[RMDB]
RNA sequence: GGGAACGACUCGAGUAGAGUCGAAAAUGCACCGGGACUUGUCUGCAGUGGCUGAUCGUGGUGCGGUAGAUCGCCGGCGUCAGGGUUUGAGUCAGCACGCGACCAUCGCCUCCUGUGGGAUCGCUGCUCCGAGGGUCUAGUUCGCUAGACCCUCGGAAAAAGAAACAACAACAACAAC
Reactivity to 2A3 in 0.01 (KOAc 150mM, MgCl2 10mM, bicine 150mM(pH8.5), 24C), signal-to-noise 1, nucleotides 027 to 126: u180g040c050a010c010c000g040g000g060a100c070u070u140g000u100c020u030g090c040a000g020u040g160g120c000u000g030a090u050c010g030u100g020g000u060g070c040g030g000u020a020g000a140u120c040g000c060c070g040g020c010g030u040c010a000g210g000g000u090u110u180g020a010g000u000c000a000g000c020a060c030g010c030g030a060c020c010a110u080c060g010c030c010u070c050c060u060g000u040g000g060g000a000u060c020g040c000u020g000c010